Conditions: 150 mM KOAc, 10 mM MgCl2 and 150 mM bicine (pH 8.5), 24 C. Chemical mapping of a 177-nucleotide RNA with DMS and 2A3. The 2A3 profile rests on 948 reads. For 2A3 the reverse transcriptase was SuperScript II with manganese.
[RMDB]
RNA sequence: GGGAACGACUCGAGUAGAGUCGAAAAGUCUGAUUGGCGAGUCUAACCUGAUUAUCAGGGAAGGCGUAGGGAAACCGACAUGGCCGCAGCAUUGCGAGGGCCGCCGUGUUCAAGCGCGGGGAGUCAAGCUCCCCAAACGAUUCGUCGUUUGGGGAGCAAAAGAAACAACAACAACAAC
Reactivity to DMS in 0.01 (KOAc 150mM, MgCl2 10mM, bicine 150mM(pH8.5), 24C), signal-to-noise 2, nucleotides 027 to 126: g000u060c050u000g000a090u060u000g000g050c060g000a040g030u000c000u000a120a120c020c000u000g020a090u080u040a180u040c000a040g000g030g010a300a080g000g020c030g000u010a060g010g090g000a110a080a140c000c040g000a060c090a070u000g000g030c000c020g010c000a090g000c060a160u010u000g000c050g000a200g040g000g000c030c050g000c070c130g030u010g040u000u020c190a040a080g000c030g050c010g000g000g000g010a010g060u000c080a240a140
Reactivity to 2A3 in 0.01 (KOAc 150mM, MgCl2 10mM, bicine 150mM(pH8.5), 24C), signal-to-noise 2, nucleotides 027 to 126: g080u030c070u080g060a180u080u120g000g000c020g010a020g020u000c000u000a080a000c000c000u000g020a070u150u300a090u300c020a000g050g000g050a070a010g010g020c050g020u120a030g000g000g020a100a000a000c020c020g030a030c030a120u060g050g000c020c050g000c000a000g010c090a080u030u150g090c060g060a150g000g080g000c000c000g030c000c000g030u020g000u030u210c160a040a090g030c020g030c000g040g000g000g050a050g020u050c060a030a000
Record summary
In probing experiments dimethyl sulfate is read out at A N1 and C N3, which are open when not base-paired.